An RNA of 177 nucleotides, treated with DMS and read out base by base. Reactivities are given for positions 27 through 126. DMS adducts were read by reverse transcription with MarathonRT.

RNA sequence: GGGAACGACUCGAGUAGAGUCGAAAAGAUAUGGAGGAUGGUCUUCGACGAUCGUGUGUAUCGGAAACGAUACCACGGGAGAAGGCCAUCCUCCUAAGUCAAAUCACGAAGGUUCGCCUUCGUGAAAUCAGGAAUAUUCCUUCGGGAAUAUUCCUGAAAAAGAAACAACAACAACAAC
Reactivity to DMS in 0.01 (KOAc 150mM, MgCl2 10mM, bicine 150mM(pH8.5), 24C), signal-to-noise 3, nucleotides 027 to 126: g020a060u000a300u000g000g020a000g030g010a040u000g000g020u000c000u020u000c010g000a080c300g030a050u010c020g000u010g000u010g040u000a010u000c000g000g000a100a120a210c000g010a000u000a000c000c010a000c000g030g000g000a040g000a010a010g010g010c000c000a000u000c000c000u000c000c000u010a000a050g000u000c030a110a160a220u000c000a000c000g010a030a010g020g000u000u000c300g020c000c010u010u000c010g020u010g010a010a020a060

The data come from the RNA Mapping Database (RMDB), library TTRDES.